Source: RMDB library M2PK50, as collected in RNAgym.
Chemical mapping of a 177-nucleotide RNA with DMS and 2A3.
Reactivities are given for positions 27 through 126.
For DMS the reverse transcriptase was MarathonRT.
2A3 adducts were read by reverse transcription with SuperScript II with manganese.
[RMDB]
RNA sequence: GGGAACGACUCGAGUAGAGUCGAAAACCCACGUGGUUCGCCACGUGGGAAAUAAAUUCAGCGGUAAUUCGAGGCCAAAUAUUACCGCUGAUGCCCUCGAAAAAAGUACACAGUUCGCUGUGUACAAGUGUAAAAAGUACUUCGGUACUUUUUACACAAAAGAAACAACAACAACAAC
Reactivity to DMS in 0.01 (KOAc 150mM, MgCl2 10mM, bicine 150mM(pH8.5), 24C), signal-to-noise 3, nucleotides 027 to 126: c000c000c000a000c010g070u020g010g010u000u000c180g020c000c000a000c000g020u000g010g000g000a000a010a020u000a060a100a050u000u000c000a000g000c000g010g020u010a020a020u000u000c170g000a140g010g000c140c110a060a090a090u000a040u000u010a010c000c000g010c000u000g000a000u000g000c010c000c000u000c200g000a000a050a070a070a100a110g000u000a000c000a010c000a010g010u000u010c180g010c010u000g010u000g000u000a000c010a020a060
Reactivity to 2A3 in 0.01 (KOAc 150mM, MgCl2 10mM, bicine 150mM(pH8.5), 24C), signal-to-noise 4, nucleotides 027 to 126: c000c000c000a000c000g000u010g010g060u040u050c180g060c060c000a000c000g010u000g000g000g000a030a080a000u090a000a100a010u040u010c010a000g010c000g010g000u010a010a010u050u100c110g100a120g140g130c100c050a050a090a010u170a020u030u000a000c020c000g000c000u000g000a000u000g000c000c000c000u030c030g030a220a070a020a020a010a000g010u010a010c000a000c010a000g010u050u090c130g040c130u000g000u000g000u000a010c000a010a010